[RMDB]
RNA sequence: GGGAACGACUCGAGUAGAGUCGAAAAGCAAGGAGCUUCGGCUCCUUGCAAAAGAAAGCUCCAUAAGGAGCAAAGGACAUGCAAAGAAAAAGUCCAAAUGCAAAAGUCCGUUCUUCGGAACGGACAACAUUCAGUUCAUCUUCGGAUGAACUGAAUGAAAAGAAACAACAACAACAAC
Reactivity to 2A3 in 0.01 (KOAc 150mM, MgCl2 10mM, bicine 150mM(pH8.5), 24C), signal-to-noise 2, nucleotides 027 to 126: g000c000a000a000g020g000a030g020c030u110u130c280g080g020c020u000c000c000u020u020g000c000a000a000a000a000g010a000a080a010g000c020u000c010c030a120u160a300a300g020g000a010g020c000a020a080a080g000g010a000c020a040u190g000c130a150a120a240g110a120a130a110a010a010g000u050c040c000a060a060a000u200g070c030a080a080a080a040g000u000c000c000g040u010u000c000u010u040c150g080g000a000a000c000g010g060a000c010a000a010
Reactivity to DMS in 0.01 (KOAc 150mM, MgCl2 10mM, bicine 150mM(pH8.5), 24C), signal-to-noise 1, nucleotides 027 to 126: g000c050a020a010g000g000a020g010c000u000u000c260g070g000c010u000c000c000u000u000g030c000a040a030a080a110g000a130a150a100g010c000u000c000c000a300u010a260a030g000g010a000g020c000a000a020a110g000g000a060c020a070u010g050c150a070a070a120g000a010a060a110a120a170g000u000c010c000a070a100a020u010g050c110a100a090a020a140g000u000c010c010g000u000u000c010u000u040c230g020g020a090a000c000g000g000a020c000a000a050

Structure probing data (2A3 and DMS) for a 177-nucleotide construct.